[RMDB]
RNA sequence: GGGAACGACUCGAGUAGAGUCGAAAAGUCACAGACUCAGUGAGAGUGUGUCUGACUCAGUCACAGUCUCACUGACACAGUCAGAGAGUGAGUCUGUGUGUCACUGACUGACUGUGUCACAGACUCACAGCGGCUUGAUAUUCGUAUCAAGCCGCUGAAAAGAAACAACAACAACAAC
Reactivity to 2A3 in 0.01 (KOAc 150mM, MgCl2 10mM, bicine 150mM(pH8.5), 24C), signal-to-noise 2, nucleotides 027 to 126: g060u000c010a050c020a090g060a080c030u020c040a010g000u010g020a030g010a000g140u010g010u000g020u010c020u020g130a300c080u070c290a000g030u000c000a000c010a020g160u020c000u000c010a020c000u000g000a020c000a010c000a000g020u010c000a000g000a000g020a000g240u020g030a030g060u000c040u140g160u050g110u120g030u040c030a030c110u040g210a070c030u030g020a060c000u020g020u010g000u020c000a000c000a020g030a030c040u010c030a080
Reactivity to DMS in 0.01 (KOAc 150mM, MgCl2 10mM, bicine 150mM(pH8.5), 24C), signal-to-noise 2, nucleotides 027 to 126: g030u010c020a100c110a110g000a160c210u000c030a050g000u000g010a010g010a030g000u000g020u000g000u010c020u000g000a160c240u000c020a010g010u000c010a000c010a010g000u000c000u000c000a000c000u010g000a010c100a060c070a020g000u010c010a040g010a120g010a140g020u010g000a010g000u000c030u020g030u000g000u000g000u000c030a060c020u000g000a150c030u000g000a040c060u010g020u000g000u000c030a050c170a030g010a030c020u010c070a180